Structure probing data (2A3 and DMS) for a 207-nucleotide construct. It was measured as part of the RMDB library RNAMAK. The RNA was probed in 150 mM KOAc, 10 mM MgCl2 and 150 mM bicine (pH 8.5) at 24 C. For 2A3 the reverse transcriptase was SuperScript II with manganese.

[RMDB]
RNA sequence: GGGAACGACUCGAGUAGAGUCGAAAAUAGCGUUCGCGCUAGCACUCGAUAUGGAGGUAGCGUGGGCUUAUGCGAUGAAACAAGUUCGGAAACGAACUUGUGGAGCAUAAGAACUACCCACCUUACCUCCUAAGUCUUGUCCGCCUUUCGAGGCGAAAGGUAAUCGUAAUUUCGAUUACGAUUACCUAAAAGAAACAACAACAACAAC
Reactivity to 2A3 in 0.01 (KOAc 150mM, MgCl2 10mM, bicine 150mM(pH8.5), 24C), signal-to-noise 7, nucleotides 027 to 156: u040a010g000c010g020u040u040c270g010c010g010c100u010a040g060c090a030c070u040c030g010a000u000a000u050g000g000a000g000g010u010a010g010c050g120u000g000g000g000c000u000u000a000u000g010c010g300a300u010g000a010a000a000c000a000a000g000u000u000c000g010g000a000a000a000c000g000a000a010c000u000u000g000u000g000g010a000g000c000a000u000a000a000g010a010a020c140u300a090c110c000c000a000c000c000u030u060a020c000c000u000c000c000u000a000a000g000u000c000u010u040g040u040c030c040g020c010c010u140u130u090c280g090a020g010g010c030g030a250a210
Reactivity to DMS in 0.01 (KOAc 150mM, MgCl2 10mM, bicine 150mM(pH8.5), 24C), signal-to-noise 3, nucleotides 027 to 156: u000a010g020c030g040u000u010c210g040c030g040c000u000a080g000c130a150c040u000c110g000a040u000a050u000g000g010a040g030g020u010a010g010c190g000u000g000g010g010c010u010u000a010u010g010c000g030a150u010g010a210a180a030c000a030a010g020u000u010c000g000g000a080a040a090c010g030a020a010c000u000u000g000u010g000g000a070g020c020a010u000a010a020g000a060a040c050u010a300c030c020c000a010c010c010u000u010a010c000c000u010c000c000u000a000a070g000u000c010u020u000g000u000c070c030g020c010c000u000u000u000c240g020a070g030g010c010g000a010a080